[RMDB]
RNA sequence: GGGAACGACUCGAGUAGAGUCGAAAAGAUAUGGAUUACCUACCCACCAUUUCAACGCGUUGAAACAGACCGAUAUCGGAAACGAUAUCGGUCUGUGGAGCGUUGAUAAUGAGGGUAAUCCUAAGUCCUAACACUUGCUGUUCGCAGCAAGUGUUAGAAAAGAAACAACAACAACAAC
Reactivity to DMS in 0.01 (KOAc 150mM, MgCl2 10mM, bicine 150mM(pH8.5), 24C), signal-to-noise 2, nucleotides 027 to 126: g010a240u010a130u000g020g000a020u000u000a000c000c000u000a140c010c000c000a300c160c020a000u000u000u020c000a010a010c000g000c000g010u030u010g020a270a110a000c010a000g000a000c000c000g010a030u020a010u000c000g010g000a070a090a210c000g010a020u000a000u000c010g000g000u000c000u000g010u000g020g000a080g010c010g000u000u010g010a000u000a020a000u000g000a140g000g000g000u000a000a000u000c010c000u020a120a100g030u000c130
The record gives the reactivity of an RNA of 177 nucleotides to DMS. The RNA was probed in 150 mM KOAc, 10 mM MgCl2 and 150 mM bicine (pH 8.5) at 24 C. Source: RMDB library TTRINS, as collected in RNAgym. The DMS profile rests on 1,568 reads. DMS adducts were read by reverse transcription with MarathonRT.